[RMDB]
RNA sequence: GGGAACGACUCGAGUAGAGUCGAAAACUGCUGCACCUGCUCCGCAGACAUCGCAACACCGGCACGCUCUGUGAGGCGCUCUGCGAUUUCUCGAGCCUGCUCCUCAGUGAUCUCCGGCAAAGUGCUGCGACAUAAUCGGUUUCGACCGAUUAUGUCGAAAAGAAACAACAACAACAAC
Reactivity to DMS in 0.01 (KOAc 150mM, MgCl2 10mM, bicine 150mM(pH8.5), 24C), signal-to-noise 3, nucleotides 027 to 126: c050u000g010c060u000g010c030a080c060c040u000g010c050u000c040c080g020c120a040g000a090c070a040u000c050g020c040a050a110c040a040c060c070g010g010c040a070c100g010c130u010c100u010g010u020g020a140g010g000c030g000c050u000c030u010g010c000g000a080u000u010u000c020u000c050g000a080g000c010c080u000g020c050u000c040c030u000c050a060g000u000g000a120u000c030u000c050c050g000g000c060a060a050a090g030u010g000c020u000g030
Reactivity to 2A3 in 0.01 (KOAc 150mM, MgCl2 10mM, bicine 150mM(pH8.5), 24C), signal-to-noise 3, nucleotides 027 to 126: c010u010g000c030u040g000c020a030c030c010u050g010c010u060c060c010g000c020a020g020a060c010a050u070c040g010c030a090a260c020a130c050c040g140g040c060a010c040g080c050u120c050u200g030u000g030a020g010g030c010g010c020u020c020u070g010c020g020a060u050u010u010c020u000c010g010a000g000c000c020u050g000c020u020c010c000u020c010a010g010u040g070a100u010c040u020c010c020g070g020c070a110a120a070g050u080g040c020u060g020